RNA sequence: GGGAACGACUCGAGUAGAGUCGAAAACCGGCGGCCCGACACAUGCAGCCGAGUUGGCUGGCUCGGAAGGGGGACAGAGUUGACCAUGACAGCGAGUGUGGCCAAGGUGACAGCUGCACGCCCGGAGGGAGGCCACUAUGUUCGCAUAGUGGCCUCCAAAAGAAACAACAACAACAAC
Reactivity to 2A3 in 0.01 (KOAc 150mM, MgCl2 10mM, bicine 150mM(pH8.5), 24C), signal-to-noise 2, nucleotides 027 to 126: c010c000g000g020c020g000g060c020c000c020g110a050c010a030c000a080u150g020c040a030g000c000c000g050a030g140u000u000g040g020c040u000g000g000c000u000c000g030g110a190a130g130g010g010g050g000a000c020a000g130a030g090u100u060g020a080c030c000a080u180g040a060c010a100g050c040g060a030g040u200g060u140g070g000c000c010a000a000g070g020u050g020a050c010a040g000c000u010g000c020a020c030g000c000c020c010g000g060a010g010
Reactivity to DMS in 0.01 (KOAc 150mM, MgCl2 10mM, bicine 150mM(pH8.5), 24C), signal-to-noise 1, nucleotides 027 to 126: c030c000g070g040c050g010g060c000c060c060g000a140c150a010c090a080u020g010c060a040g080c040c030g020a100g000u000u050g000g020c010u000g020g000c040u000c000g000g000a020a070g000g000g010g010g010a080c040a060g020a120g030u070u020g000a100c110c010a010u020g010a130c140a000g020c000g000a080g000u040g000u000g000g010c000c000a070a070g000g020u040g000a190c120a170g000c020u000g000c030a030c020g020c050c020c000g030g020a200g010
Annotation
The data come from the RNA Mapping Database (RMDB), library RFM100. Chemical mapping of a 177-nucleotide RNA with 2A3 and DMS. For 2A3, 931 sequencing reads were counted. Reactivities are given for positions 27 through 126.